[RMDB]
RNA sequence: GGGAACGACUCGAGUAGAGUCGAAAACCCUUUGUGUUCGCACAAAGGGAAAAGUCAGAAAGAUCAAAAAGAUCAGCGAUAUAACUGACAAAUAAACGCAAAAAACCUCCUCGUUCGCGAGGAGGAAAUGAAAAUAAGUCUUCGGACUUAUUUUCAUAAAAGAAACAACAACAACAAC
Reactivity to 2A3 in 0.01 (KOAc 150mM, MgCl2 10mM, bicine 150mM(pH8.5), 24C), signal-to-noise 2, nucleotides 027 to 126: c000c000c000u010u000u010g010u000g020u010u060c180g050c040a000c000a000a000a000g030g000g000a090a130a020a030g020u000c000a000g070a120a120a030g000a030u040c040a050a280a260a070a000g000a040u030c020a030g090c060g090a020u010a010u020a300a060c000u010g000a010c010a000a110a010u140a040a050a010c050g020c120a070a050a000a030a100a140c000c000u010c000c010u000c010g020u020u040c230g030c000g130a000g000g000a000g000g000a020a000
Reactivity to DMS in 0.01 (KOAc 150mM, MgCl2 10mM, bicine 150mM(pH8.5), 24C), signal-to-noise 2, nucleotides 027 to 126: c000c000c000u000u010u000g030u000g000u000u030c210g050c000a010c000a010a020a000g010g040g000a030a040a090a080g010u000c000a000g000a110a140a180g000a000u020c010a050a050a050a190a180g000a010u000c020a060g010c150g020a140u020a070u000a060a140c000u000g010a000c010a050a070a080u010a010a080a080c110g010c080a000a080a050a080a080a120c010c000u010c030c000u000c000g030u000u000c220g000c000g000a010g000g000a010g030g000a000a010